[RMDB]
RNA sequence: GGGAACGACUCGAGUAGAGUCGAAAACUAUGCGACUUCGGUCGCAUAGAAAAGGUGCAUCGUACGGUACCGAAGUACGAUUAAUGCUCAAAAGAGCUAAAAAAAGCACGCCCUUCGGGGCGUGCAAGCUAUUAGACGAGUUCGCUCGUCUAAUAGCAAAAGAAACAACAACAACAAC
Reactivity to 2A3 in 0.01 (KOAc 150mM, MgCl2 10mM, bicine 150mM(pH8.5), 24C), signal-to-noise 1, nucleotides 027 to 126: c000u000a000u010g000c040g010a000c020u000u030c210g110g000u000c000g000c020a000u010a000g000a000a100a010a000g020g020u070g030c020a010u000c020g010u030a010c010g050g280u010a040c050c030g100a030a000g000u000a000c010g000a000u010u020a040a050u080g010c010u000c030a210a300a110a060g020a010g000c020u100a070a150a000a000a000a030a060g010c010a000c000g020c010c010c070u020u030c250g050g000g010g070c000g000u010g010c000a020a010
Reactivity to DMS in 0.01 (KOAc 150mM, MgCl2 10mM, bicine 150mM(pH8.5), 24C), signal-to-noise 1, nucleotides 027 to 126: c000u000a000u000g010c000g000a040c000u000u010c230g030g050u000c000g000c000a000u020a010g010a040a100a070a150g000g020u010g010c110a000u000c000g000u000a000c010g000g000u000a130c010c050g000a020a120g000u000a010c020g000a030u000u010a070a060u030g040c020u000c010a090a070a090a160g000a000g020c010u000a000a000a120a100a040a100a030g000c000a010c010g020c020c000c000u000u000c180g010g040g020g020c000g020u010g020c020a010a000
Chemical mapping of a 177-nucleotide RNA with 2A3 and DMS. 2A3 adducts were read by reverse transcription with SuperScript II with manganese. It was measured as part of the RMDB library M2PK50. For 2A3, 1,789 sequencing reads were counted. The RNA was probed in 150 mM KOAc, 10 mM MgCl2 and 150 mM bicine (pH 8.5) at 24 C. For DMS, 1,205 sequencing reads were counted.